[RMDB]
Structure probing data (DMS and 2A3) for a 177-nucleotide construct. For 2A3, 15,928 sequencing reads were counted. The DMS profile rests on 8,196 reads. The RNA was probed in 150 mM KOAc, 10 mM MgCl2 and 150 mM bicine (pH 8.5) at 24 C.
RNA sequence: GGGAACGACUCGAGUAGAGUCGAAAAUAACGGACUAGGAAACUCGAUCUUUUAAGUGGUAAUCCUAGCGAAUCCACGGCGAGGAAACUAGGACACUAACCAUGUCAUCCCGGACGCUAGAAGAAAAGUCUUAACAACUAUUCGUAGUUGUUAAGACAAAAGAAACAACAACAACAAC
Reactivity to DMS in 0.01 (KOAc 150mM, MgCl2 10mM, bicine 150mM(pH8.5), 24C), signal-to-noise 7, nucleotides 027 to 126: u010a100a100c110g010g000a170c010u010a030g000g010a110a130a200c030u000c020g010a090u000c050u000u010u010u010a080a150g020u010g010g020u000a110a130u000c050c020u000a030g000c050g000a250a140u000c010c010a040c060g010g000c040g010a040g000g000a070a120a100c010u000a010g010g000a040c070a020c070u010a080a070c090c100a140u000g010u000c020a100u000c010c010c010g020g010a080c050g000c040u000a030g010a180a110g000a050a060a070a100
Reactivity to 2A3 in 0.01 (KOAc 150mM, MgCl2 10mM, bicine 150mM(pH8.5), 24C), signal-to-noise 7, nucleotides 027 to 126: u110a030a040c060g030g030a030c010u020a010g040g060a080a140a060c010u010c020g060a160u090c160u070u300u090u160a240a060g010u010g030g010u040a070a040u030c020c010u010a030g010c030g020a010a030u000c000c000a030c010g070g010c040g030a010g010g030a050a060a040c000u000a010g010g030a000c010a000c060u040a040a030c020c020a030u090g030u040c020a040u030c010c020c000g010g020a020c030g000c050u040a020g030a170a000g050a030a200a010a010